RNA sequence: GGGAACGACUCGAGUAGAGUCGAAAAACUCGGCCUUACGAGGCCGAGAACCAAUUAUGGCCUCGGCAGCGGGUCAGGGCCGACUGCUGCCUGAAGAAGGGGAUAACGCUCCGCUACGGCGGAGCGAAAACGGGUGGAUUUUCGAAUCCACCCGUUUAAAAGAAACAACAACAACAAC
Reactivity to 2A3 in 0.01 (KOAc 150mM, MgCl2 10mM, bicine 150mM(pH8.5), 24C), signal-to-noise 1, nucleotides 027 to 126: a000c050u170c020g020g000c050c010u140u020a180c300g120a050g010g000c040c000g000a000g000a000a000c000c040a040a000u080u170a210u300g050g040c000c010u020c020g000g070c000a020g000c010g010g000g060u120c020a060g050g010g030c100c030g050a000c020u080g030c000u000g000c000c040u050g070a020a150g000a070a000g050g000g000g000a000u070a090a050c040g050c000u000c000c000g000c040u020a040c270g150g010c000g020g000a000g030c000g020a000
Reactivity to DMS in 0.01 (KOAc 150mM, MgCl2 10mM, bicine 150mM(pH8.5), 24C), signal-to-noise 1, nucleotides 027 to 126: a030c030u000c000g000g000c000c000u000u040a060c090g000a000g000g010c000c040g000a000g010a050a150c010c020a070a060u020u020a030u000g070g000c100c000u000c120g000g010c000a030g030c000g060g000g000u000c040a040g000g000g010c000c070g060a260c260u000g020c000u040g000c000c030u000g110a140a040g020a010a070g010g000g160g020a120u300a120a180c010g000c000u000c000c000g040c000u000a150c290g050g000c000g030g070a010g030c000g000a000